Chemical mapping of a 177-nucleotide RNA with 2A3 and DMS. For DMS, 2,081 sequencing reads were counted. It was measured as part of the RMDB library OK1LIB.
RNA sequence: GGGAACGACUCGAGUAGAGUCGAAAAACUGCGACAGGGCGGAUGCAUGAAACAAAAUGCAUCUCGGCAAUGCUCUGCGCGUCUACAUACCAGCAGCCGAGAACUGGCGCAGAUAACAAGCGCAGACAAAUAAAAAUUUAUUCGUAAAUUUUUAUUUAAAAGAAACAACAACAACAAC
Reactivity to 2A3 in 0.01 (KOAc 150mM, MgCl2 10mM, bicine 150mM(pH8.5), 24C), signal-to-noise 2, nucleotides 027 to 126: a000c000u000g000c010g000a000c000a010g050g060g120c090g060g000a000u010g010c000a000u000g070a160a120a220c080a060a120a020a000u010g000c000a000u000c010u000c000g010g000c020a060a090u020g000c020u000c000u040g000c000g000c000g010u030c050u150a120c050a110u190a070c040c040a010g000c010a020g190c010c000g090a120g030a100a020c010u020g020g000c000g000c020a000g020a020u090a060a070c080a180a020g000c000g000c000a000g010a030c020
Reactivity to DMS in 0.01 (KOAc 150mM, MgCl2 10mM, bicine 150mM(pH8.5), 24C), signal-to-noise 2, nucleotides 027 to 126: a130c010u000g000c010g000a050c000a050g000g030g040c120g010g020a010u000g000c000a010u000g000a160a100a180c220a110a100a170a030u000g000c010a030u000c000u020c030g020g000c000a060a060u030g000c090u000c000u000g000c050g040c000g000u020c140u030a170c140a130u010a040c080c020a100g000c010a110g000c000c010g000a060g000a120a070c020u010g000g000c010g000c000a020g000a170u010a070a130c070a110a120g000c000g000c000a040g000a200c090